[RMDB]
Structure probing data (2A3 and DMS) for a 207-nucleotide construct. The RNA was probed in 150 mM KOAc, 10 mM MgCl2 and 150 mM bicine (pH 8.5) at 24 C. It was measured as part of the RMDB library RNAMAK.
RNA sequence: GGGAACGACUCGAGUAGAGUCGAAAAGGGGUCUGUCGCCGUCUUGGAUUUAAUGAGCUUUUGACGUUCUGAAGCCUCCACGGAACGAUAAGCUCAUUUGUCAGACGGUGGACAGACGGAGGCACCCAAAAGUAUAGUCACUUCGGUGACUAUACAAGAGAAGGUUAAUGUUCGCAUUAACCUUCUCAAAAGAAACAACAACAACAAC
Reactivity to 2A3 in 0.01 (KOAc 150mM, MgCl2 10mM, bicine 150mM(pH8.5), 24C), signal-to-noise 4, nucleotides 027 to 156: g020g000g000g020u000c000u000g010u000c010g010c000c010g010u000c020u120u260g150g020a090u250u260u270a020a020u030g000a000g000c020u060u110u160u220g180a070c010g000u000u020c000u020g070a130a070g030c030c020u030c020c010a030c030g000g010a010a010c000g050a070u040a140a010g000c000u000c000a010u020u010u040g070u040c030a020g000a010c000g000g010u020g000g050a000c000a000g000a000c000g000g010a000g010g020c030a070c010c000c000a010a200a020a000g010u000a000u000a000g000u000c010a000c000u020u030c300g090g000u010g000a000c010u000a000u000a000c000a010a010
Reactivity to DMS in 0.01 (KOAc 150mM, MgCl2 10mM, bicine 150mM(pH8.5), 24C), signal-to-noise 1, nucleotides 027 to 156: g000g020g040g020u000c010u020g050u000c060g000c020c010g000u000c000u020u010g040g000a100u000u000u000a010a030u000g010a030g010c010u000u000u000u000g010a190c060g050u000u000c000u010g000a060a160g020c030c020u000c010c050a300c040g010g010a010a040c000g010a130u000a030a040g020c020u010c000a030u000u010u010g000u020c040a040g020a030c010g000g010u000g000g020a020c000a000g010a030c000g030g000a040g020g040c010a130c020c000c010a070a050a120a210g010u000a010u010a010g010u000c010a010c010u000u010c260g040g010u010g000a030c010u010a000u000a000c000a050a130